[RMDB]
RNA sequence: GGGAACGACUCGAGUAGAGUCGAAAACUUUGACCCUGUAGGAGCUGGAGUAAGCAAUAUCAGAAAUACCAUCACAAAGGAAAUGGUAGAGUUCUAUGAACUUACAGCAAUCAGAGGAAACAUGUCAACCGUACCGCUAGUUCGCUAGCGGUACGGUAAAAGAAACAACAACAACAAC
Reactivity to DMS in 0.01 (KOAc 150mM, MgCl2 10mM, bicine 150mM(pH8.5), 24C), signal-to-noise 1, nucleotides 027 to 126: c160u000u000u050g030a130c000c200c070u000g000u040a020g000g110a090g090c020u000g000g000a120g030u010a050a000g000c170a120a030u070a000u060c000a120g000a080a030a230u020a010c000c000a000u010c210a120c280a080a070a070g000g070a180a060a000u000g000g010u000a010g020a050g000u000u000c000u000a000u000g070a240a000c020u000u000a080c000a000g010c020a100a200u000c020a000g000a000g020g000a300a030a030c130a090u120g050u020c010a000
Reactivity to 2A3 in 0.01 (KOAc 150mM, MgCl2 10mM, bicine 150mM(pH8.5), 24C), signal-to-noise 2, nucleotides 027 to 126: c000u030u050u100g160a160c070c000c020u000g040u110a110g120g180a100g030c050u000g000g010a050g010u000a090a020g000c130a140a000u010a050u300c100a050g010a020a010a000u070a000c010c010a020u060c030a030c150a120a130a090g090g020a130a170a000u030g000g000u000a000g000a040g090u150u000c010u000a040u080g040a000a000c000u010u050a060c000a000g040c000a050a080u090c000a000g070a170g070g000a060a060a060c010a120u170g030u150c000a000